[RMDB]
An RNA of 207 nucleotides, treated with DMS and 2A3 and read out base by base. The reactions ran in a buffer of 150 mM KOAc, 10 mM MgCl2 and 150 mM bicine (pH 8.5), at 24 C. Source: RMDB library RFM130, as collected in RNAgym. For 2A3, 2,497 sequencing reads were counted.
RNA sequence: GGGAACGACUCGAGUAGAGUCGAAAAAUGCCACAGUGUCUGGGCAAAGUAGGCUGUUUUUAAUAGUACUAACUUAAUCCACUGAUGGCUAUAGGAAAGCAUUGUGUAAUCCCCGAACACCUCUGUGGUGUAUUGGAUUCAUGACAUUGCGACAAUUAUACAUUGUCAAGUUCGCUUGACAAUGUAUAAAAGAAACAACAACAACAAC
Reactivity to DMS in 0.01 (KOAc 150mM, MgCl2 10mM, bicine 150mM(pH8.5), 24C), signal-to-noise 2, nucleotides 027 to 156: a110u010g000c030c010a030c000a050g020u000g010u000c070u020g010g020g000c150a100a050a060g030u000a070g020g020c000u000g010u000u000u000u000u000a020a080u000a070g030u010a090c020u010a100a080c040u000u000a120a270u010c040c010a040c040u000g020a170u000g030g020c060u000a070u010a080g000g020a100a110a210g000c080a080u000u000g010u000g010u000a080a080u000c010c000c040c060g010a090a120c000a020c000c010u010c300u000g010u020g020g030u000g000u010a060u000u000g030g000a110u000u000c040a110u000g020a090c120a120u000u010g000c010g020a300c040a010a300u000u000
Reactivity to 2A3 in 0.01 (KOAc 150mM, MgCl2 10mM, bicine 150mM(pH8.5), 24C), signal-to-noise 5, nucleotides 027 to 156: a000u050g000c000c000a010c000a000g010u010g030u080c090u140g040g080g020c130a070a000a020g000u010a000g010g000c010u000g070u010u020u040u110u270a080a060u090a050g020u090a300c000u030a250a000c010u030u050a030a030u040c010c000a000c000u030g100a270u010g120g000c000u020a050u070a040g070g030a030a050a020g000c000a010u020u050g010u010g030u090a010a030u020c030c000c000c010g070a150a010c000a010c010c010u070c160u300g250u250g040g000u000g000u020a100u020u070g000g000a010u010u010c040a020u080g040a020c020a040u010u050g000c010g020a030c040a040a030u050u010